[RMDB]
RNA sequence: GGGAACGACUCGAGUAGAGUCGAAAAUAUAGUUAAUCUGCCCUACACUGGGGGACAACACUUAGAAAUGAGUGCUAAUACCCCAUACUCCUACCUAACAUAAGUUAGGUAGGGAAAGUUUUUCGGUCGAUGCUCUUAGAUUCGUCUAAGAGCAUCGAAAAGAAACAACAACAACAAC
Reactivity to 2A3 in 0.01 (KOAc 150mM, MgCl2 10mM, bicine 150mM(pH8.5), 24C), signal-to-noise 2, nucleotides 027 to 126: u150a020u080a010g160u110u280a060a060u050c030u030g080c000c000c000u010a020c070a060c100u040g000g000g010g000g000a010c050a030a000c000a000c020u030u080a030g060a010a110a030u040g040a000g000u000g020c060u060a020a060u030a100c000c000c000c060a000u030a040c110u070c000c000u000a000c000c000u000a000a000c000a150u240a300a050g000u000u020a000g000g000u000a000g000g000g000a000a100a000g010u030u000u000u070u160c080g000g000u040
The record gives the reactivity of an RNA of 177 nucleotides to 2A3. For 2A3, 646 sequencing reads were counted. It was measured as part of the RMDB library RFM100. The RNA was probed in 150 mM KOAc, 10 mM MgCl2 and 150 mM bicine (pH 8.5) at 24 C.